[RMDB]
RNA sequence: GGGAACGACUCGAGUAGAGUCGAAAAAUAACAUAGACAGAUUAAGUGCUUUGCUUGAAUCAAGGAGACUAAUAUUGAACAACCUAACUAUCCAAAUUACAGAUAUUACAAAUCCAUUAUGGCUAGAUAUCGAGAUGACUUUCGAGUCAUCUCGAUAAAAAGAAACAACAACAACAAC
Reactivity to DMS in 0.01 (KOAc 150mM, MgCl2 10mM, bicine 150mM(pH8.5), 24C), signal-to-noise 2, nucleotides 027 to 126: a030u040a040a040c130a160u010a040g000a130c040a030g030a110u000u010a000a050g000u000g030c050u090u000u030g000c040u040u000g010a110a060u030c060a010a220g000g040a130g020a120c060u040a020a030u000a080u000u020g000a150a100c000a210a160c020c070u040a020a020c080u000a030u010c020c020a010a040a090u000u000a100c190a050g000a010u030a010u000u030a020c160a060a050a130u000c010c000a050u040u010a040u000g000g070c060u040a000g060a160
Reactivity to 2A3 in 0.01 (KOAc 150mM, MgCl2 10mM, bicine 150mM(pH8.5), 24C), signal-to-noise 2, nucleotides 027 to 126: a000u070a010a010c010a030u040a040g080a040c030a000g000a030u060u140a170a050g010u080g050c150u050u060u300g000c000u060u100g170a040a050u090c010a040a040g000g000a060g060a010c000u050a030a050u090a010u110u090g000a000a060c000a020a010c070c020u010a010a020c010u020a040u070c000c050a050a040a050u050u010a050c000a060g010a000u010a050u070u000a060c010a030a160a030u000c010c000a000u020u180a130u110g110g000c030u000a010g010a190
Structure probing data (DMS and 2A3) for a 177-nucleotide construct. The DMS profile rests on 1,360 reads. For 2A3, 1,476 sequencing reads were counted.